The record gives the reactivity of an RNA of 207 nucleotides to 2A3. The 2A3 profile rests on 993 reads. High 2A3 reactivity points to a flexible backbone, as in loops and unpaired stretches. Source: RMDB library OK3TST, as collected in RNAgym. Values are in units of 0.01, from 0 to 300, in steps of 10.

[RMDB]
RNA sequence: GGGAACGACUCGAGUAGAGUCGAAAAGCUGGUCGGUGACGACCAGCAACGAUCAGAGUGCUGAUCGAAACGUGCACUUAAAGACCGUCAAGGCACGAACAAGCGACGCAGACGGUCAAAGCCAGAGAGGGCAUAACAAAAAUAAAAAGGCGUCGCAGACGUCAUCUUCGUUCGCGAAGAUGACGUCAAAAGAAACAACAACAACAAC
Reactivity to 2A3 in 0.01 (KOAc 150mM, MgCl2 10mM, bicine 150mM(pH8.5), 24C), signal-to-noise 1, nucleotides 027 to 156: g000c000u010g000g010u000c000g020g060u110g050a040c040g000a000c010c000a000g000c010a000a000c000g000a000u000c010a000g060a070g220u250g170c020u010g000a000u020c030g000a020a030a010c010g020u000g000c020a030c210u010u040a080a050a010g010a000c010c010g000u000c020a020a090g020g000c030a000c000g020a050a070c080a060a010g030c000g000a000c000g000c000a030g000a000c000g000g000u000c000a000a000a020g010c000c000a010g060a020g020a090g260g090g000c000a010u070a120a030c100a030a060a030a010a000u130a040a080a010a000a000g040g040c000g000u000c000g000c020a010
Reactivities are given for positions 27 through 156.